[RMDB]
RNA sequence: GGGAACGACUCGAGUAGAGUCGAAAAGAUAUGGAGGGUUUAGGACAUGAAUGAAUGGUCGGAAACGACCAUUAUUCAACAGCCUGGGACCCUCCUAAGUCAAAACAGUACUGUUCGCAGUACUGAAGUAGUAUAAACUCUUCGGAGUUUAUACUACAAAAGAAACAACAACAACAAC
Reactivity to 2A3 in 0.01 (KOAc 150mM, MgCl2 10mM, bicine 150mM(pH8.5), 24C), signal-to-noise 4, nucleotides 027 to 126: g010a010u040a040u100g000g000a000g000g000g030u000u040u080a010g050g000a090c150a280u300g010a020a000u040g120a050a030u000g010g000u000c010g000g030a050a030a040c010g000a000c010c010a000u010u000a000u010u000c000a000a030c040a030g040c000c000u080g060g070g020a020c000c000c000u010c000c000u000a010a000g000u000c020a000a010a100a140c010a000g020u000a000c000u010g080u100u160c300g000c150a000g000u000a010c000u000g000a080a040
Reactivity to DMS in 0.01 (KOAc 150mM, MgCl2 10mM, bicine 150mM(pH8.5), 24C), signal-to-noise 6, nucleotides 027 to 126: g010a040u000a300u010g000g010a010g020g010g010u000u000u000a040g010g010a030c080a260u010g000a020a010u010g020a020a000u000g010g010u000c000g010g010a080a070a170c010g010a010c000c000a000u000u000a010u000u000c010a070a110c250a120g000c000c000u010g020g010g000a020c000c000c000u000c000c000u000a010a060g000u010c030a100a120a110a260c010a010g010u000a010c010u000g010u010u010c260g010c010a010g010u000a000c000u010g000a050a090